Annotation:
Chemical mapping of a 177-nucleotide RNA with 2A3 and DMS. Reactivities are given for positions 27 through 126. 2A3 adducts were read by reverse transcription with SuperScript II with manganese. It was measured as part of the RMDB library OK2TRN. The reactions ran in a buffer of 150 mM KOAc, 10 mM MgCl2 and 150 mM bicine (pH 8.5), at 24 C.
[RMDB]
RNA sequence: GGGAACGACUCGAGUAGAGUCGAAAAUGAAGAUCCACAGACAUGUCUAACUGAUAAUACUCAGUUUGUAUUGGGACUCUAUCUGUGUGCUUCCUGCAGUCAUAUCCAUUAAGAGACUUAAUGCAUAUCGACAGAAUUGUUUCGACAAUUCUGUCGAAAAAGAAACAACAACAACAAC
Reactivity to 2A3 in 0.01 (KOAc 150mM, MgCl2 10mM, bicine 150mM(pH8.5), 24C), signal-to-noise 2, nucleotides 027 to 126: u080g010a020a020g000a130u040c020c000a030c000a010g000a000c010a080u160g000u040c010u080a000a030c000u040g070a040u080a300a140u080a200c040u010c020a040g050u030u110u110g150u080a220u090u180g020g050g010a000c020u040c050u090a050u030c010u020g010u060g000u050g080c010u020u000c000c030u040g000c030a000g030u060c030a080u090a000u130c000c010a030u030u080a070a000g140a000g030a150c020u020u040a040a000u030g000c000a040u080a010
Reactivity to DMS in 0.01 (KOAc 150mM, MgCl2 10mM, bicine 150mM(pH8.5), 24C), signal-to-noise 2, nucleotides 027 to 126: u000g010a110a050g020a130u000c080c010a030c080a070g000a030c080a130u000g010u000c020u010a050a080c040u000g000a060u000a200a160u010a180c300u000c000a040g010u000u000u010g040u000a110u010u000g000g000g000a020c020u010c120u020a170u000c000u020g020u000g000u000g010c050u020u000c000c070u000g070c060a040g000u000c170a090u000a080u000c120c000a080u000u000a040a070g010a220g000a070c050u000u000a030a050u000g000c300a040u000a070